[RMDB]
RNA sequence: GGGAACGACUCGAGUAGAGUCGAAAAUUCUGAAAAACUCAUAUGAUCCUGCACUUGGCUUCUUCCUAAUGGAUAAUCCUAAAUGUGCUGGCUUGUUGGGAUUCAACUAUAAUGUUUGGAUUGCCUGUACGACGACACCUUUGGGAGAGAAGUAUCACCUACCUCUACAGUUCGCUGUAGAGGUAGGAAAAGAAACAACAACAACAAC
Reactivity to 2A3 in 0.01 (KOAc 150mM, MgCl2 10mM, bicine 150mM(pH8.5), 24C), signal-to-noise 2, nucleotides 027 to 156: u080u000c050u060g000a040a000a060a030a000c030u020c030a030u120a070u210g070a130u130c010c000u060g070c040a100c070u090u060g080g040c000u040u020c010u070u060c030c020u180a210a080u190g050g020a020u130a110a020u010c000c010u050a090a070a060u130g010u010g000c010u010g080g000c040u020u080g050u050u020g000g020g010a030u000u000c020a010a010c020u080a000u140a300a200u170g130u090u010u040g020g000a010u090u030g190c000c030u050g100u070a060c000g000a010c010g010a030c020a070c050c000u030u050u030g010g000g000a040g020a000g000a080a000g010u000a110u080c000a010